[RMDB]
RNA sequence: GGGAACGACUCGAGUAGAGUCGAAAAGGCAGCGCCUGCGGUUCGCGCCAGGCGUAGUCGCGGCCGAGGCACUGGCUGGCCAGGCAGCGGUAGAACUGCCCGGCGUUCUCCAGGCCGCCCUGGCGCAGCCGUACCCUGGAUUCGUCCAGGGUACGGCAAAAGAAACAACAACAACAAC
Reactivity to DMS in 0.01 (KOAc 150mM, MgCl2 10mM, bicine 150mM(pH8.5), 24C), signal-to-noise 2, nucleotides 027 to 126: g000g030c010a060g020c100g030c020c020u030g020c060g020g020u000u030c130g040c000g000c050c030a040g000g020c170g010u010a050g010u010c080g030c000g000g000c020c010g010a120g000g050c030a060c060u000g030g000c100u000g000g000c010c000a020g020g000c010a020g030c080g020g000u020a050g040a140a160c010u000g010c010c010c020g020g000c030g000u000u000c040u000c020c120a160g010g020c020c040g020c050c030c010u000g010g010c000g020c050a110
Reactivity to 2A3 in 0.01 (KOAc 150mM, MgCl2 10mM, bicine 150mM(pH8.5), 24C), signal-to-noise 2, nucleotides 027 to 126: g030g000c030a010g050c020g000c050c000u020g080c060g030g050u140u300c100g010c000g040c040c000a030g060g000c050g070u060a020g020u010c050g000c010g070g010c010c040g020a100g030g000c090a040c190u070g080g090c060u070g090g000c030c000a010g000g020c010a000g000c020g180g070u260a100g040a160a040c010u040g010c080c000c000g020g000c000g040u120u000c030u000c040c030a060g010g040c010c000g000c000c020c000u000g000g030c040g000c030a010